[RMDB]
RNA sequence: GGGAACGACUCGAGUAGAGUCGAAAAAUGAUCUUGUUAGACUGGUAAUUACAAAGUGCCCUAGGAGGCUAGGAGGACUGACCAAGAGAGAAGGGAAAGCAUUUUGUUCUGACCAUAAUGACAUAAGAUAUCUCUCGCGAUUCGUCGCGAGAGAUAUAAAAGAAACAACAACAACAAC
Reactivity to DMS in 0.01 (KOAc 150mM, MgCl2 10mM, bicine 150mM(pH8.5), 24C), signal-to-noise 2, nucleotides 027 to 126: a080u020g040a120u050c070u000u000g010u000u000a020g010a270c220u000g020g020u000a030a040u000u000a050c000a040a040a020g020u020g000c030c030c000u000a060g030g000a300g000g010c050u000a000g000g000a080g000g000a150c120u040g000a130c090c000a170a060g000a020g020a050g030a220a200g000g000g020a010a090a190g010c050a000u000u000u000u000g000u000u000c030u000g000a000c030c000a020u000a040a050u000g000a070c060a070u010a110a070g010
Reactivity to 2A3 in 0.01 (KOAc 150mM, MgCl2 10mM, bicine 150mM(pH8.5), 24C), signal-to-noise 2, nucleotides 027 to 126: a000u300g040a070u040c070u100u160g010u020u040a010g050a070c030u000g000g010u070a050a040u040u020a050c010a020a020a000g030u040g000c030c020c000u030a010g000g030a060g070g080c110u100a020g020g010a040g030g090a070c020u050g040a050c000c000a060a020g060a020g010a000g030a160a090g010g020g000a000a100a000g020c000a020u000u000u000u000g030u000u060c020u000g020a000c010c000a020u080a140a020u140g010a000c000a000u110a050a040g010

This 177-nucleotide RNA was probed chemically with DMS and 2A3. It was measured as part of the RMDB library RFM100. 2A3 adducts were read by reverse transcription with SuperScript II with manganese. The reactions ran in a buffer of 150 mM KOAc, 10 mM MgCl2 and 150 mM bicine (pH 8.5), at 24 C.